[RMDB]
RNA sequence: GGGAACGACUCGAGUAGAGUCGAAAACAUUAGCCGUUCGCGGCUAAUGCCGACUGUCUUGUUUGAUGGUAGAGUGCAAGGACAGGUAGACCUUUUUAGAAAUCGCCCAUUCAUUCGUGAAUGGGAACUGAUUAGUAAUUUUCGAAUUACUAAUCAGAAAAGAAACAACAACAACAAC
Reactivity to DMS in 0.01 (KOAc 150mM, MgCl2 10mM, bicine 150mM(pH8.5), 24C), signal-to-noise 9, nucleotides 027 to 126: c010a010u000u000a000g010c000c000g020u000u010c210g030c020g010g010c000u000a000a000u000g010c060c060g010a120c030u000g000u000c020u010u000g010u000u010u010g010a110u010g010g010u000a070g010a130g010u000g010c030a050a050g000g000a030c030a020g000g010u000a090g010a180c030c010u000u010u010u000u010a110g000a060a080a110u010c180g000c010c000c000a010u000u000c010a050u000u020c180g010u000g000a010a010u000g000g000g000a010a030
Reactivity to 2A3 in 0.01 (KOAc 150mM, MgCl2 10mM, bicine 150mM(pH8.5), 24C), signal-to-noise 9, nucleotides 027 to 126: c000a000u000u000a000g000c000c000g030u040u040c280g010c010g110g010c010u000a000a000u000g030c010c010g090a080c020u020g020u030c010u040u090g080u150u160u190g170a150u120g060g100u070a070g030a050g120u090g020c010a020a020g070g020a030c010a010g010g030u030a020g040a050c010c010u060u110u030u080u190a130g100a050a120a040u160c100g030c010c000c000a000u000u000c010a010u010u060c140g110u020g010a000a000u000g000g010g000a000a010